[RMDB]
RNA sequence: GGGAACGACUCGAGUAGAGUCGAAAAAGUGUAUGAAGUACGUAGAGUGUCGGCAAGCUCUAUAUAUGGACACUUACGAAGGGUUUUGGUUGUUUUGUAUCUCACGCCGACUUUGAGUAUUUGAGGAAAAAGACUUACGCCUUCGGGCGUAAGUCAAGUCCUCUACUAACUUCGGUUAGUAGAGGACAAAAGAAACAACAACAACAAC
Reactivity to 2A3 in 0.01 (KOAc 150mM, MgCl2 10mM, bicine 150mM(pH8.5), 24C), signal-to-noise 1, nucleotides 027 to 156: a010g110u170g000u060a190u190g020a100a020g010u060a020c040g020u000a020g020a030g120u080g050u110c060g060g000c100a140a000g000c040u010c040u060a010u010a010u040a000u120g130g000a000c030a000c060u040u010a040c080g030a090a040g030g050g050u030u030u180u180g040g000u000u000g010u000u170u000u040g060u010a070u030c000u020c050a010c010g020c000c010g000a030c000u010u060u050g050a060g030u040a060u100u230u190g030a020g000g010a020a130a020a000a000g000a000c000u010u000a000c010g030c000c000u010u040c080g120g000g000c000g000u000a000a000g010u000c000a000a000

An RNA of 207 nucleotides, treated with 2A3 and read out base by base. For 2A3 the reverse transcriptase was SuperScript II with manganese. The RNA was probed in 150 mM KOAc, 10 mM MgCl2 and 150 mM bicine (pH 8.5) at 24 C.